The data come from the RNA Mapping Database (RMDB), library RFM100. An RNA of 177 nucleotides, treated with 2A3 and read out base by base. 2A3 adducts were read by reverse transcription with SuperScript II with manganese. For 2A3, 536 sequencing reads were counted. Values cover nucleotides 27 to 126. Conditions: 150 mM KOAc, 10 mM MgCl2 and 150 mM bicine (pH 8.5), 24 C.

[RMDB]
RNA sequence: GGGAACGACUCGAGUAGAGUCGAAAAGCGUUCUUCAAGCGAGCUUGGGGUAGUGGGAGCUAAGUAGAACAAGGUAAGAAACUGGCGCUUUCUGUCGUAUUUUUAAAAACAAUGAAGUAAUAAAUUACUCGGUAGGAUUGUUCGCAAUCCUACCGAGAAAAGAAACAACAACAACAAC
Reactivity to 2A3 in 0.01 (KOAc 150mM, MgCl2 10mM, bicine 150mM(pH8.5), 24C), signal-to-noise 1, nucleotides 027 to 126: g040c030g010u050u000c000u110u100c070a040a000g000c000g060a000g000c020u040u010g000g000g020g000u040a080g020u100g060g010g140a020g040c010u000a040a000g180u040a030g050a080a000c020a000a000g100g000u120a100a000g010a060a110a000c000u070g010g000c000g000c100u010u040u000c000u000g020u070c040g000u000a300u000u050u000u000u070a160a060a030a000a000c040a070a000u090g000a000a030g000u090a000a290u060a020a090a020u060u170a060